Conditions: 150 mM KOAc, 10 mM MgCl2 and 150 mM bicine (pH 8.5), 24 C. An RNA of 177 nucleotides, treated with 2A3 and DMS and read out base by base. For DMS the reverse transcriptase was MarathonRT.

RNA sequence: GGGAACGACUCGAGUAGAGUCGAAAAACAGUCAUCCAUGUGUGAUCGUACACAUGAUCUAGCAUAUGUACGUACAGUAUACGAUCCAGAUCUAGGUACCAUGUCUAGUACAUGGCUAGUCGAGUACCGAUACCGCACAGUUCGCUGUGCGGUAUCGAAAAGAAACAACAACAACAAC
Reactivity to 2A3 in 0.01 (KOAc 150mM, MgCl2 10mM, bicine 150mM(pH8.5), 24C), signal-to-noise 2, nucleotides 027 to 126: a000c020a000g120u070c020a070u000c040c000a000u010g000u000g000u000g030a070u090c040g000u050a000c010a000c010a020u020g010a040u020c060u140a050g110c040a100u070a030u180g040u070a020c060g030u040a050c020a060g050u070a060u000a080c040g000a030u030c000c000a020g030a090u080c030u070a020g000g080u020a070c010c010a060u130g010u000c040u070a090g000u040a010c010a010u000g000g050c000u010a000g000u020c020g040a010g060u040a050c000
Reactivity to DMS in 0.01 (KOAc 150mM, MgCl2 10mM, bicine 150mM(pH8.5), 24C), signal-to-noise 3, nucleotides 027 to 126: a080c100a130g020u010c060a090u000c070c020a010u000g000u000g000u000g010a040u000c040g000u000a040c020a050c060a000u000g010a110u010c140u000a120g010c070a050u010a060u010g010u000a010c060g000u020a110c090a090g020u000a090u010a040c050g000a050u000c050c100a100g020a030u010c060u010a060g010g020u000a150c030c040a090u010g010u000c060u030a090g040u000a030c020a010u000g010g000c010u000a030g000u000c060g010a100g010u000a030c130